Source: RMDB libraries RFM100 and RFMREP, as collected in RNAgym. The record gives the reactivity of an RNA of 177 nucleotides to 2A3 and DMS. DMS adducts were read by reverse transcription with MarathonRT. 2A3 adducts were read by reverse transcription with SuperScript II with manganese. The RNA was probed in 150 mM KOAc, 10 mM MgCl2 and 150 mM bicine (pH 8.5) at 24 C. For 2A3, 1,426 sequencing reads were counted.
RNA sequence: GGGAACGACUCGAGUAGAGUCGAAAAUGUCUUGGUAUUAUUGGCCGAUCAGACCUGUUCCGUCUGCUGUAGUUUUUGACGCAUUCUUGAUCUAUUGGUAACUCAUGAACCCCAUCGUAAUAAAUAGUAAGAUAUGCCUUUUCGAAGGCAUAUCUUAAAAAGAAACAACAACAACAAC
Reactivity to 2A3 in 0.01 (KOAc 150mM, MgCl2 10mM, bicine 150mM(pH8.5), 24C), signal-to-noise 3, nucleotides 027 to 126: u120g010u000c040u020u060g020g040u050a060u130u030a100u070u210g050g010c030c010g030a050u060c020a000g020a040c030c000u020g040u040u080c020c040g030u030c030u030g010c040u070g050u090a060g070u090u000u010u000u150g070a040c040g000c030a040u100u110c010u040u030g020a030u030c020u050a070u060u020g070g000u060a060a040c000u000c050a080u060g020a030a040c030c000c010c000a060u130c050g030u050a050a050u030a110a210a030u060a040g170
Reactivity to DMS in 0.01 (KOAc 150mM, MgCl2 10mM, bicine 150mM(pH8.5), 24C), signal-to-noise 5, nucleotides 027 to 126: u010g000u000c020u000u000g010g020u010a060u020u010a080u010u010g000g000c030c040g010a090u010c070a080g000a080c040c050u020g020u010u010c020c030g020u010c050u000g000c080u010g010u010a060g000u000u000u010u000u010g010a110c080g030c060a080u020u010c040u000u000g000a030u010c040u000a090u020u010g010g010u000a050a070c060u000c060a030u000g000a080a130c060c020c010c050a090u030c130g010u010a070a060u030a060a070a100u030a090g000